[RMDB]
RNA sequence: GGGAACGACUCGAGUAGAGUCGAAAAGAUAUGGAACCUCACAUUAUCGAUGAAAGUUGGUCGGAAACGACCAACUGGAGAUGGAUGUGAGGGUUCCUAAGUCAAAACGAGCGCUUCGGCGCUCGAAGCGUAUAUCUUCGUUCGCGAAGAUAUACGCAAAAGAAACAACAACAACAAC
Reactivity to DMS in 0.01 (KOAc 150mM, MgCl2 10mM, bicine 150mM(pH8.5), 24C), signal-to-noise 2, nucleotides 027 to 126: g000a030u020a300u000g000g020a000a040c010c010u020c000a000c000a010u000u000a040u000c000g000a240u000g010a170a110a010g000u000u000g010g020u000c000g000g010a130a080a270c010g020a030c000c000a010a000c000u000g000g020a030g000a020u000g010g030a000u000g000u010g000a050g010g010g010u000u010c000c000u000a020a170g020u000c080a100a070a100a170c030g000a020g000c010g020c000u000u020c230g050g000c010g040c000u000c020g000a010a050
Reactivity to 2A3 in 0.01 (KOAc 150mM, MgCl2 10mM, bicine 150mM(pH8.5), 24C), signal-to-noise 2, nucleotides 027 to 126: g020a010u040a050u210g000g010a000a020c010c000u070c000a010c000a020u020u140a040u090c210g280a300u050g050a050a000a000g030u020u010g000g000u020c010g050g020a010a040a100c000g000a000c000c000a010a000c000u000g000g010a030g010a010u100g140g020a010u010g000u010g010a070g000g020g000u020u000c000c010u010a090a030g080u010c010a000a020a090a220c000g010a010g000c000g000c070u120u170c300g220g060c090g000c020u030c010g000a010a010
This 177-nucleotide RNA was probed chemically with DMS and 2A3. In probing experiments dimethyl sulfate is read out at A N1 and C N3, which are open when not base-paired. For DMS, 1,963 sequencing reads were counted.